[RMDB]
RNA sequence: GGGAACGACUCGAGUAGAGUCGAAAAUUGUGGUCAAGACCUUGGCGUAGUAUCCAAGGUUGUCAAGGUUCCUAUUGACUUAACAAUGAUUGAGUUUAUGUUAUGGUGUAAGGAUGCACAGGGGAAAGGAUAGUCCAUGUUUCGACAUGGACUAUCCAAAAGAAACAACAACAACAAC
Reactivity to 2A3 in 0.01 (KOAc 150mM, MgCl2 10mM, bicine 150mM(pH8.5), 24C), signal-to-noise 1, nucleotides 027 to 126: u020u020g020u030g030g020u120c030a060a030g000a010c000c000u000u000g010g000c040g050u060a030g070u050a060u090c040c010a050a010g010g000u000u030g000u020c030a040a000g020g000u010u000c010c000u020a070u040u040g050a020c000u000u040a060a000c020a050a150u140g070a200u040u120g100a120g220u090u000u050a120u140g090u090u050a060u110g000g000u040g040u060a010a080g070g030a050u060g010c030a000c030a010g030g010g020g040a030a060a060
Reactivity to DMS in 0.01 (KOAc 150mM, MgCl2 10mM, bicine 150mM(pH8.5), 24C), signal-to-noise 3, nucleotides 027 to 126: u000u010g030u000g000g010u010c050a080a090g000a000c000c000u000u000g000g030c180g020u010a110g000u000a140u000c020c030a030a050g000g020u000u010g010u000c060a040a080g010g020u000u000c060c070u000a120u010u000g010a030c020u000u010a110a050c020a060a030u010g000a150u010u000g010a100g010u010u000u010a080u010g010u000u000a070u000g010g000u000g020u000a080a070g000g000a050u000g010c030a030c070a070g000g000g010g010a130a050a100
Chemical mapping of a 177-nucleotide RNA with 2A3 and DMS. For 2A3, 1,372 sequencing reads were counted. Source: RMDB library M2PK90, as collected in RNAgym. DMS (dimethyl sulfate) methylates the pairing face of unpaired adenines and cytosines. Values cover nucleotides 27 to 126. The reactions ran in a buffer of 150 mM KOAc, 10 mM MgCl2 and 150 mM bicine (pH 8.5), at 24 C.